Structure probing data (2A3) for a 207-nucleotide construct. 2A3 adducts were read by reverse transcription with SuperScript II with manganese. It was measured as part of the RMDB library ARCHII. The reactions ran in a buffer of 150 mM KOAc, 10 mM MgCl2 and 150 mM bicine (pH 8.5), at 24 C.
[RMDB]
RNA sequence: GGGAACGACUCGAGUAGAGUCGAAAAAGGCAUUAUGAGGCAUAUUUUGCGACUCGUGUGGCGACGUAAACGCUCAGUUAAAUAUAACUGCAAAAAAUAACACUUCUUACGCUCUAGCUGCCUAAAAACCAGCAGGCGUGACCCGAUUUGGAUUGCUCUAUCAUUACCGGUUCGCCGGUAAUGAUAGAAAAGAAACAACAACAACAAC
Reactivity to 2A3 in 0.01 (KOAc 150mM, MgCl2 10mM, bicine 150mM(pH8.5), 24C), signal-to-noise 3, nucleotides 027 to 156: a020g060g000c030a060u090u110a100u300g050a050g000g030c060a030u050a090u070u140u070u050g010c050g050a050c030u030c030g000u000g030u030g030g000c040g010a020c030g060u160a030a030a060c000g000c010u000c020a000g010u020u040a110a300a160u240a150u080a090a030c000u020g020c070a000a020a000a020a180a000u200a140a040c060a030c030u080u110c010u060u080a010c000g000c000u010c010u200a100g020c000u010g010c000c000u000a030a010a000a020a000c000c000a000g010c000a000g010g000c000g000u000g050a030c000c000c020g130a140u040u050u180g170g000a140u110u080g020c000u000